RNA sequence: GGGAACGACUCGAGUAGAGUCGAAAAAGCGGUGGCUACGGCCACCGCAAGCGCAGCAUCCCUUGGGCCAGUGGCAACCAUUUAAUGCCGUGGGGAUGUGGCCCCUGUCCUGUUGCGCGAGAGCCAAUAUGUGGAUUUCUUUCGAGAAAUCCACAUAAAAAGAAACAACAACAACAAC
Reactivity to 2A3 in 0.01 (KOAc 150mM, MgCl2 10mM, bicine 150mM(pH8.5), 24C), signal-to-noise 4, nucleotides 027 to 126: a000g010c010g010g000u010g040g050c020u040a080c300g070g000c000c000a010c000c000g000c000a000a000g000c000g010c000a010g020c000a030u070c010c010c000u030u030g040g020g010c020c030a040g020u060g110g030c040a090a080c030c030a090u030u130u300a300a160u220g050c020c030g060u070g000g020g000g020a040u060g070u060g120g000c010c000c000c000u020g050u120c000c010u020g020u050u020g000c020g000c020g000a060g020a010g070c030c020a050a040
Reactivity to DMS in 0.01 (KOAc 150mM, MgCl2 10mM, bicine 150mM(pH8.5), 24C), signal-to-noise 2, nucleotides 027 to 126: a080g050c000g040g130u000g010g020c010u000a020c280g020g000c030c000a010c010c000g030c000a000a030g000c050g000c020a020g000c010a050u010c070c030c010u000u000g030g000g000c020c070a070g000u050g010g020c080a080a150c070c070a040u000u050u020a080a130u030g000c040c030g000u000g000g020g000g000a060u030g030u030g030g000c010c020c000c010u000g000u010c080c050u000g000u000u000g020c000g000c020g020a150g040a180g010c090c080a050a220
The data come from the RNA Mapping Database (RMDB), library RFM100. This 177-nucleotide RNA was probed chemically with 2A3 and DMS. Reactivities are given for positions 27 through 126. The RNA was probed in 150 mM KOAc, 10 mM MgCl2 and 150 mM bicine (pH 8.5) at 24 C.